RNA sequence: GGGAACGACUCGAGUAGAGUCGAAAAUGAGGAAGAGGCGGCCGUAACCGUGGUUCUUAACUAGGAGUAUGUGUCAGAAUCACCUGGGGCACUUUUGCAAAAAUACACAUGCUUGACCCGGCCAGAUCAACUGAGUCAGGAUCUAGAUUUUAAAUGACCGUGCUCGCAUAUUCGUAUGCGAGCACGGAAAAGAAACAACAACAACAAC
Reactivity to 2A3 in 0.01 (KOAc 150mM, MgCl2 10mM, bicine 150mM(pH8.5), 24C), signal-to-noise 1, nucleotides 027 to 156: u050g000a030g040g000a030a100g010a100g000g130c070g000g000c020c030g100u090a050a010c020c000g070u010g000g010u070u030c080u110u170a160a090c050u020a030g200g030a010g080u010a040u080g020u050g060u110c100a000g060a050a000u000c050a000c080c020u100g000g000g090g000c030a030c170u260u040u040u260g010c020a020a040a080a040a000u170a030c030a000c040a060u060g000c000u010u010g000a020c020c000c030g010g010c030c030a010g030a060u090c030a030a170c020u020g000a040g020u000c030a070g000g000a000u040c000u070a080g040a200u080u000u060u300a140a170a150u110g110a140